[RMDB]
RNA sequence: GGGAACGACUCGAGUAGAGUCGAAAAGAGUCUACCUAUUUAUCCAGGAAUAGCUGUUAUUCCUGCUUCUGAAAUUGAAGAAAGUAAUCAUGAUGAGGAAUUGGACAGUGCUAACAAUGUAGAGUUAGCAGUCUUAAGGUUUCGACCUUAAGACUGCAAAAGAAACAACAACAACAAC
Reactivity to DMS in 0.01 (KOAc 150mM, MgCl2 10mM, bicine 150mM(pH8.5), 24C), signal-to-noise 3, nucleotides 027 to 126: g010a090g010u000c010u010a300c040c020u000a060u010u000u000a020u000c140c030a020g000g010a040a020u010a020g020c210u000g010u000u000a030u010u000c000c010u000g010c050u000u010c010u000g000a060a100a140u020u000g000a060a070g010a100a060a060g020u010a090a080u000c120a070u000g010a060u000g010a090g010g000a080a090u010u000g010g020a030c040a070g010u010g020c060u000a010a040c030a070a110u010g010u010a070g010a120g010u020u010a060
Reactivity to 2A3 in 0.01 (KOAc 150mM, MgCl2 10mM, bicine 150mM(pH8.5), 24C), signal-to-noise 2, nucleotides 027 to 126: g000a000g020u000c000u070a060c010c000u020a140u110u220u050a120u070c010c010a020g040g030a040a030u010a040g080c120u070g110u300u030a020u010u010c010c000u030g090c000u000u000c020u080g160a160a150a150u200u100g020a060a040g020a120a080a000g150u070a060a070u110c060a060u130g120a040u040g010a060g000g040a060a070u050u060g030g020a000c000a020g060u010g130c020u010a050a020c040a060a100u100g010u120a050g000a070g120u030u050a000
This 177-nucleotide RNA was probed chemically with DMS and 2A3.
For 2A3, 1,145 sequencing reads were counted.
Source: RMDB library OK2TST, as collected in RNAgym.